[RMDB]
RNA sequence: GGGAACGACUCGAGUAGAGUCGAAAAUAGUGACUGUCGAUGGUGUAAAUUUUAGAACAGUCGUUCUAAAUAAUAAGAACACUUAUAGAUCACAGCUUGGAUGCGUUUUCUUUAAUGGUGCUGAUAUGAUGAUAGCUAACUUCGGUUAGCUAUCAUCAAAAGAAACAACAACAACAAC
Reactivity to DMS in 0.01 (KOAc 150mM, MgCl2 10mM, bicine 150mM(pH8.5), 24C), signal-to-noise 2, nucleotides 027 to 126: u000a120g010u000g020a050c060u010g010u020c100g020a100u010g010g010u010g010u010a040a180a150u000u000u010u000a020g000a020a000c000a180g010u010c210g000u000u000c010u030a010a010a000u010a050a100u010a150a180g000a130a090c020a040c010u010u040a050u000a080g000a080u000c050a040c010a060g030c040u000u010g030g010a070u020g020c090g010u000u010u000u000c010u000u000u020a070a100u000g020g000u010g020c050u000g000a080u010a050u010
Reactivity to 2A3 in 0.01 (KOAc 150mM, MgCl2 10mM, bicine 150mM(pH8.5), 24C), signal-to-noise 1, nucleotides 027 to 126: u130a010g030u020g000a050c020u020g000u050c080g060a000u040g060g000u020g000u040a040a060a190u070u060u010u050a010g000a010a020c010a060g230u110c150g010u000u000c000u020a040a060a020u160a050a060u120a110a040g040a130a000c000a000c000u100u000a080u010a160g050a040u070c000a000c020a040g010c030u060u070g040g020a020u020g000c000g010u030u050u010u000c020u080u050u030a140a090u080g000g000u020g000c030u020g010a030u030a020u190

Chemical mapping of a 177-nucleotide RNA with DMS and 2A3. For DMS the reverse transcriptase was MarathonRT. The reactions ran in a buffer of 150 mM KOAc, 10 mM MgCl2 and 150 mM bicine (pH 8.5), at 24 C. Source: RMDB library 15KREP, as collected in RNAgym. For 2A3 the reverse transcriptase was SuperScript II with manganese.